[RMDB]
Conditions: 150 mM KOAc, 10 mM MgCl2 and 150 mM bicine (pH 8.5), 24 C. This 207-nucleotide RNA was probed chemically with DMS and 2A3. For 2A3, 810 sequencing reads were counted. Values cover nucleotides 27 to 156.

RNA sequence: GGGAACGACUCGAGUAGAGUCGAAAAGGUGUAAAUGAGCAGUCCUUGUACAUUUGGGACUCAAACUCUGAGAUGGAGGGACACUUUUUGGCUGGUACUUGUACCUCAAGAAUUUGGAAUACAGUUCCAUGAUGGUGGGACUCAGACUUCUGAAUGAACUAGAGGGGAAUUUCGAUUCCCCUCUAGUAAAAGAAACAACAACAACAAC
Reactivity to DMS in 0.01 (KOAc 150mM, MgCl2 10mM, bicine 150mM(pH8.5), 24C), signal-to-noise 1, nucleotides 027 to 156: g000g060u000g010u000a070a110a070u000g000a110g010c050a070g020u000c000c000u000u010g090u000a130c110a220u000u000u020g020g030g000a040c020u010c050a070a070a050c040u000c020u000g010a100g010a070u010g000g010a100g020g000g000a060c020a050c050u000u000u010u000u000g000g000c040u000g040g030u000a020c080u000u000g020u010a000c040c020u000c040a070a150g010a100a080u000u010u010g020g010a120a060u000a140c170a050g000u000u000c010c010a010u000g000a090u000g030g030u000g030g050g020a060c020u000c000a140g000a090c100u000u000c000u020g000a020a070u000g000a120
Reactivity to 2A3 in 0.01 (KOAc 150mM, MgCl2 10mM, bicine 150mM(pH8.5), 24C), signal-to-noise 2, nucleotides 027 to 156: g050g010u050g080u130a090a170a110u180g030a060g050c100a020g000u020c000c000u050u080g130u150a050c100a300u190u210u130g000g000g000a000c010u010c030a030a050a070c050u000c010u040g080a100g020a210u150g130g010a020g000g050g000a000c010a000c000u030u000u000u010u000g040g000c060u040g090g080u020a030c010u040u020g010u080a080c000c040u030c060a110a070g060a040a090u050u020u030g000g010a000a000u030a080c020a050g010u020u010c000c000a000u100g070a100u150g080g030u030g000g010g000a010c000u010c020a040g010a140c010u040u000c000u000g010a030a120u000g010a040